[RMDB]
RNA sequence: GGGAACGACUCGAGUAGAGUCGAAAAAGGCUGGGGAAUCCCCUCUUUUACACCCGGCGGCAGACGCAGCAUCCGCGCGCAACCGCCACACCCGUUUCGGGGACCUCGGUACAGGCAGGCUGAGAACAGAGUGCACGAAAUUCGUUUCGUGCACUCUAAAAGAAACAACAACAACAAC
Reactivity to 2A3 in 0.01 (KOAc 150mM, MgCl2 10mM, bicine 150mM(pH8.5), 24C), signal-to-noise 2, nucleotides 027 to 126: a030g210g000c230u100g000g000g000g010a020a230u100c000c000c030c000u020c020u000u100u000u090a020c030a090c010c050c000g000g050c020g000g040c050a070g080a180c010g030c050a050g010c000a150u130c090c120g000c000g000c020g000c040a040a090c000c010g070c000c000a030c020a020c010c030c000g080u140u150u230c040g010g000g000g000a010c000c010u020c020g010g000u000a050c030a090g040g090c000a000g000g010c020u040g040a000g010a120a000c000
Reactivity to DMS in 0.01 (KOAc 150mM, MgCl2 10mM, bicine 150mM(pH8.5), 24C), signal-to-noise 1, nucleotides 027 to 126: a000g050g000c130u010g000g060g000g000a130a180u000c110c000c000c020u010c030u010u000u000u090a100c140a000c000c160c000g040g130c000g010g020c060a050g000a300c170g030c010a000g000c150a140u000c160c050g080c000g000c000g040c100a300a080c050c000g000c010c010a070c210a160c000c030c080g000u000u000u000c140g000g000g000g000a030c220c000u000c070g000g000u000a060c070a210g000g000c110a000g000g000c000u000g080a100g010a000a050c240
About this RNA:
This 177-nucleotide RNA was probed chemically with 2A3 and DMS. The RNA was probed in 150 mM KOAc, 10 mM MgCl2 and 150 mM bicine (pH 8.5) at 24 C. Source: RMDB library RFM100, as collected in RNAgym. For DMS, 830 sequencing reads were counted. Reactivities are given for positions 27 through 126. DMS adducts were read by reverse transcription with MarathonRT.